[RMDB]
RNA sequence: GGGAACGACUCGAGUAGAGUCGAAAAAUGAGAUCCCAUCUUUCACACUGUGCUAAUUUGAGAUUCUCAUGCCUCCUACUUGGAGAGAUCUGGACUAGAAGUCAGGGCAUCUGACUCUGCCAGCCACAAAACGUACAAGGCUUCGGCCUUGUACGAAGCCACAUUUAACCUUCGGGUUAAAUGUGGCAAAAGAAACAACAACAACAAC
Reactivity to 2A3 in 0.01 (KOAc 150mM, MgCl2 10mM, bicine 150mM(pH8.5), 24C), signal-to-noise 1, nucleotides 027 to 156: a000u000g010a010g000a020u040c010c000c000a010u000c020u000u110u000c030a010c020a060c140u300g010u020g030c070u060a030a060u030u050u020g040a060g010a010u240u050c020u000c010a040u040g020c000c010u010c000c000u110a210c130u090u300g000g020a060g020a020g000a090u060c000u000g010g000a060c010u060a150g030a120a000g050u020c000a000g030g140g040c030a120u150c170u000g000a000c010u000c000u000g040c000c000a030g030c040c010a090c010a040a110a050a010c030g000u010a000c000a000a000g020g000c000u050u090c130g030g000c030c000u000u020g000u000a000c000g010a000a000